[RMDB]
RNA sequence: GGGAACGACUCGAGUAGAGUCGAAAACUGGGCCUGGAGCGCUAUGAAUGGUAUGUGGGCGACAUGUCACGACAGAGAGCCGAAUCGCUGCUGAAGCAAGGUGAUAAGGAGGGCUGCUUUGUGGUCACCGUGCGAUGCAUUUCGAUGCAUCGCACGGAAAAGAAACAACAACAACAAC
Reactivity to DMS in 0.01 (KOAc 150mM, MgCl2 10mM, bicine 150mM(pH8.5), 24C), signal-to-noise 1, nucleotides 027 to 126: c050u010g020g030g030c040c000u000g030g000a070g010c070g070c070u000a040u000g010a090a160u000g010g060u000a050u000g030u000g040g020g000c080g010a080c070a040u000g000u000c010a070c060g000a090c100a050g010a080g030a080g010c020c140g020a070a060u000c070g000c100u000g000c070u000g000a100a090g010c070a070a050g000g000u000g000a060u000a150a140g030g000a110g000g010g030c010u000g000c020u000u000u000g010u000g020g000u000c040a170
Reactivity to 2A3 in 0.01 (KOAc 150mM, MgCl2 10mM, bicine 150mM(pH8.5), 24C), signal-to-noise 1, nucleotides 027 to 126: c020u000g010g080g010c020c150u080g050g040a060g070c030g010c020u120a120u190g090a150a060u120g070g050u090a080u120g140u090g040g040g070c030g040a040c050a070u050g000u080c040a000c120g110a030c050a020g140a000g000a010g020c050c080g040a060a050u080c000g030c040u080g040c000u070g060a120a040g000c070a000a040g020g000u060g000a080u040a160a030g030g000a050g000g040g020c030u030g060c000u100u030u100g070u070g030g000u020c000a010